[RMDB]
RNA sequence: GGGAACGACUCGAGUAGAGUCGAAAAGUUCAAUGCUUCGGCAUUGAACAAAAGAAAGGUCAUGCGAGACCAAUCGCAACUCAGAAAAACUGAGAAAAAGAAAAAGAACUGUCUUCGGACAGUUCAAGAUACUGAUCUUCUUCGGAAGAUCAGUAUCAAAAGAAACAACAACAACAAC
Reactivity to 2A3 in 0.01 (KOAc 150mM, MgCl2 10mM, bicine 150mM(pH8.5), 24C), signal-to-noise 3, nucleotides 027 to 126: g000u000u000c010a010a000u010g000c000u060u120c270g070g010c000a000u000u000g000a000a000c010a000a070a000a000g030a030a070a000g040g010u030c040a040u140g120c090g050a110g040a070c030c050a020a070u000c020g000c010a050a100c010u010c000a010g130a090a210a050a080a120c020u010g000a010g000a050a100a030a000a020g120a010a080a010a010a030g000a000a000c000u000g000u000c000u040u080c190g050g010a000c000a000g000u000u000c010a000a000
Reactivity to DMS in 0.01 (KOAc 150mM, MgCl2 10mM, bicine 150mM(pH8.5), 24C), signal-to-noise 2, nucleotides 027 to 126: g000u000u000c010a010a020u000g000c000u010u020c230g040g050c010a000u000u000g000a000a000c000a070a050a140a110g000a040a040a300g020g010u000c030a110u010g080c240g000a180g000a070c040c060a020a150u030c010g010c180a080a110c010u000c000a040g000a100a100a030a120a070c010u000g020a000g000a050a050a110a060a160g000a060a050a110a110a150g000a040a010c000u000g000u000c000u000u020c150g020g010a010c010a000g000u000u000c030a010a050